[RMDB]
RNA sequence: GGGAACGACUCGAGUAGAGUCGAAAACGCGCAGGGAUGUUUUCGAAUCUAUGUUUAUGGUCUCCCUUUGACUGAUUCACAGUUACGACCAUGGAUUCGCAUAGAUAGGCGUCUCAAAGGGAGCGCGACUUUUACCCUGGUUCGCCAGGGUAAAAGUAAAAGAAACAACAACAACAAC
Reactivity to 2A3 in 0.01 (KOAc 150mM, MgCl2 10mM, bicine 150mM(pH8.5), 24C), signal-to-noise 2, nucleotides 027 to 126: c020g010c010g000c030a040g030g070g000a030u000g070u030u080u060u150c040g090a090a090u000c000u020a020u030g100u020u160u090a040u050g000g040u030c020u050c020c030c000u000u070u030g010a000c020u030g060a100u220u130c180a080c030a250g030u030u090a120c060g010a010c000c000a010u000g060g000a140u250u060c040g000c030a040u030a020g030a020u060a040g020g030c000g000u000c000u000c030a100a110a020g090g000g020a080g000c010g000c020g020
Reactivity to DMS in 0.01 (KOAc 150mM, MgCl2 10mM, bicine 150mM(pH8.5), 24C), signal-to-noise 3, nucleotides 027 to 126: c020g000c040g020c040a180g000g000g000a030u000g000u000u010u010u000c090g000a120a060u000c010u000a010u000g010u000u000u010a070u010g000g010u010c000u010c120c120c070u000u000u000g020a020c070u000g040a240u000u010c260a160c030a020g000u000u000a080c270g010a020c010c010a020u010g010g000a120u000u010c230g000c070a040u010a000g000a030u000a110g010g010c000g010u000c010u000c020a060a100a100g010g010g010a130g010c000g010c030g010
Description:
This 177-nucleotide RNA was probed chemically with 2A3 and DMS. DMS adducts were read by reverse transcription with MarathonRT. For 2A3, 2,338 sequencing reads were counted. For 2A3 the reverse transcriptase was SuperScript II with manganese.